[RMDB]
RNA sequence: GGGAACGACUCGAGUAGAGUCGAAAAGAAUGAAAGAACCCUUCCCGCGGGGCUGGAUCUUCCAGAUGGUGCGGGCCGGGACAAGCCGGAGAGUGUCCCGGUUUCAGAAACAACCUUCGGCAGCCAAACUAGACUACCCACUUCGGUGGGUAGUCAAGGAUAGUCUAUACUUCGGUAUAGACUAUCCAAAAGAAACAACAACAACAAC
Reactivity to 2A3 in 0.01 (KOAc 150mM, MgCl2 10mM, bicine 150mM(pH8.5), 24C), signal-to-noise 2, nucleotides 027 to 156: g010a020a040u130g050a160a080a200g060a120a130c000c000c000u000u010c000c000c010g000c000g010g010g000g000c000u000g020g010a110u130c070u200u030c160c010a000g000a000u050g020g300u030g010c010g000g010g000c000c000g000g000g000a000c000a000a000g010c010c010g010g000a000g000a000g000u010g000u000c000c000c010g000g000u000u000u000c000a000g010a000a010a020c050a010a010c020c000u000u010c000g030g000c000a060g080c080c050a050a120a130c080u200a080g050a010c000u080a000c000c000c020a000c000u030u030c130g100g000u000g000g000g000u000a000g000u010c000a000a000